This 177-nucleotide RNA was probed chemically with 2A3 and DMS. 2A3 adducts were read by reverse transcription with SuperScript II with manganese. The 2A3 profile rests on 31,175 reads.

RNA sequence: GGGAACGACUCGAGUAGAGUCGAAAAGAGAGAAAUACCGCGCGCAAUCAGAGAAAGGACUGUAAGGACGCGAAAUCCUUUCCGUCAGUUACCGCAAGAAAGAGCGAUGUGUGACGAAUAGAGAGAGCAUCAUACUAAUCUUCGGAUUAGUAUGAUGAAAAGAAACAACAACAACAAC
Reactivity to 2A3 in 0.01 (KOAc 150mM, MgCl2 10mM, bicine 150mM(pH8.5), 24C), signal-to-noise 9, nucleotides 027 to 126: g100a000g020a000g040a010a080a030u130a080c020c020g000c000g000c000g000c040a040a120u100c020a050g030a010g050a140a050a030g060g010a020c000u020g020u120a050a050g090g020a020c020g010c030g100a070a020a020u020c000c000u000u010u010c000c010g010u010c000a010g010u080u090a060c010c020g010c040a050a030g090a170a110a010g100a030g020c030g020a070u060g060u010g030u030g060a030c020g040a040a020u130a060g090a000g010a000g000a010g070
Reactivity to DMS in 0.01 (KOAc 150mM, MgCl2 10mM, bicine 150mM(pH8.5), 24C), signal-to-noise 9, nucleotides 027 to 126: g010a090g010a120g010a060a060a060u020a070c050c050g010c050g010c040g010c050a100a060u020c060a050g000a160g010a040a070a060g000g000a050c030u000g010u020a070a070g000g010a050c030g010c120g000a070a100a170u000c020c010u000u010u000c030c020g010u000c020a040g010u000u000a060c060c030g010c040a070a070g020a070a080a090g000a070g010c020g010a050u020g010u020g010u000g000a040c040g010a080a060u020a060g010a100g000a090g000a090g000